[RMDB]
RNA sequence: GGGAACGACUCGAGUAGAGUCGAAAAAAAUUAUGGUCGCCGGCACGUAUGAGCACACCGAGAAUGACACUCUUUCGCCGUCAACCGUGUCGGUAGUCUUGCACAUCAGGAAUCCGUCUGCGUUGAAAUCAUAUAGAGUGUUCGCACUCUAUAUGAUAAAAGAAACAACAACAACAAC
Reactivity to DMS in 0.01 (KOAc 150mM, MgCl2 10mM, bicine 150mM(pH8.5), 24C), signal-to-noise 7, nucleotides 027 to 126: a050a050a050u010u000a060u000g010g010u000c040g010c010c010g010g000c020a030c030g020u010a090u010g000a140g020c070a070c110a080c190c100g000a040g000a050a070u010g000a110c150a140c080u000c040u000u000u000c110g020c050c040g010u010c050a050a060c200c030g020u000g010u000c010g010g020u000a030g010u000c020u000u000g010c070a050c090a060u010c050a040g000g000a060a060u000c040c020g010u000c040u000g010c110g010u010u000g000a090a100
Reactivity to 2A3 in 0.01 (KOAc 150mM, MgCl2 10mM, bicine 150mM(pH8.5), 24C), signal-to-noise 5, nucleotides 027 to 126: a010a010a000u250u120a100u130g020g020u020c010g000c030c000g000g000c010a000c010g030u050a040u160g060a050g030c030a020c000a020c100c040g020a030g050a140a130u160g060a030c030a020c080u070c000u030u120u140c070g000c050c030g080u080c020a030a040c060c020g010u000g020u010c000g000g000u010a030g000u010c020u030u060g010c060a060c000a110u090c030a020g050g040a030a060u020c020c010g040u020c050u040g020c030g060u040u070g070a140a150